[RMDB]
RNA sequence: GGGAACGACUCGAGUAGAGUCGAAAAGCUUAUGCAGCUCCACCAUGGACUCAGGCUGAUUUUUUAGCUGCAAAUCCCUGGACAGAGGUUGAAAGUGAUACAAUCACACCAUGGACUCAGGUUGAACUAUUUCAUCCGAGUUCGCUCGGAUGAAAUAAAAAGAAACAACAACAACAAC
Reactivity to DMS in 0.01 (KOAc 150mM, MgCl2 10mM, bicine 150mM(pH8.5), 24C), signal-to-noise 1, nucleotides 027 to 126: g010c060u000u020a030u000g000c060a050g000c000u000c030c020a230c060c060a100u000g010g000a100c050u000c190a160g020g000c060u030g000a060u000u000u000u030u010u000a050g040c040u030g040c090a050a100a160u000c030c010c010u020g000g000a090c120a040g000a040g040g010u000u020g010a100a100a060g000u000g000a140u010a090c130a080a150u000c010a010c040a180c030c040a040u010g040g000a090c040u010c020a040g000g010u000u000g000a040a060c240

Description: The data come from the RNA Mapping Database (RMDB), library OK2TST. Chemical mapping of a 177-nucleotide RNA with DMS. The reactions ran in a buffer of 150 mM KOAc, 10 mM MgCl2 and 150 mM bicine (pH 8.5), at 24 C.